[RMDB]
RNA sequence: GGGAACGACUCGAGUAGAGUCGAAAAGAAAACGGCAGCAAGCCGAGCAAGUAGAGCAACGCGAGCAAGAUCAGCAACGCGAGCAACAUCAGCAACAUGAGCAAGAUCAGCAACUACAGCAAAAAAAGAGUAAUAUGUGAUUCGUCACAUAUUACUCAAAAGAAACAACAACAACAAC
Reactivity to 2A3 in 0.01 (KOAc 150mM, MgCl2 10mM, bicine 150mM(pH8.5), 24C), signal-to-noise 4, nucleotides 027 to 126: g060a000a110a010a010c040g030g010c020a040g030c080a150a110g000c040c020g030a000g000c020a050a040g040u120a020g040a020g020c020a060a060c040g010c010g020a030g000c030a070a020g030a180u110c030a020g030c020a040a110c030g000c020g040a010g030c000a000a040c010a050u060c020a000g000c010a010a060c010a130u100g040a020g060c030a060a020g020a100u050c020a000g020c010a020a030c010u090a060c040a040g080c090a000a120a030a020a020a020a030
Reactivity to DMS in 0.01 (KOAc 150mM, MgCl2 10mM, bicine 150mM(pH8.5), 24C), signal-to-noise 4, nucleotides 027 to 126: g020a100a070a100a110c070g010g010c030a060g000c140a100a120g010c020c050g030a120g000c070a050a100g020u010a110g010a100g010c060a060a090c120g020c100g020a120g000c040a060a050g010a050u010c060a060g000c040a050a030c080g000c080g000a090g020c060a040a050c030a030u000c050a040g000c000a050a040c060a060u000g000a060g010c040a050a040g010a060u000c050a070g010c010a030a020c040u000a050c090a040g030c060a000a010a060a080a020a060a120
This 177-nucleotide RNA was probed chemically with 2A3 and DMS. The reactions ran in a buffer of 150 mM KOAc, 10 mM MgCl2 and 150 mM bicine (pH 8.5), at 24 C. It was measured as part of the RMDB library M2PK90. DMS adducts were read by reverse transcription with MarathonRT. Reactivities are given for positions 27 through 126.